[RMDB]
The record gives the reactivity of an RNA of 177 nucleotides to DMS. Source: RMDB library OK2TRN, as collected in RNAgym. The reactions ran in a buffer of 150 mM KOAc, 10 mM MgCl2 and 150 mM bicine (pH 8.5), at 24 C. DMS adducts were read by reverse transcription with MarathonRT. Values cover nucleotides 27 to 126.

RNA sequence: GGGAACGACUCGAGUAGAGUCGAAAAUCUUUUUGGUACUUACACAUGGACAACAGCUUUAUCUAUGGCUGCAGCAAAGGUUAUUGCUAAGUGGGUUGCUGUGAAUGUUUUGUAUUUCACAGAUAUAUACGGAUGUUAUCUUCGGAUAACAUCCGUAAAAAGAAACAACAACAACAAC
Reactivity to DMS in 0.01 (KOAc 150mM, MgCl2 10mM, bicine 150mM(pH8.5), 24C), signal-to-noise 1, nucleotides 027 to 126: u020c020u000u010u000u010u020g020g030u010a060c040u000u010a060c070a080c060a090u010g020g020a120c080a070a120c030a050g000c030u010u000u010a100u030c190u040a050u020g010g000c040u000g000c060a050g000c020a050a050a110g010g000u000u000a050u000u000g010c060u000a060a060g040u010g000g000g030u000u000g030c010u000g030u000g020a030a030u000g000u000u000u010u010g000u000a060u000u000u000c040a030c070a020g000a020u020a050u000a130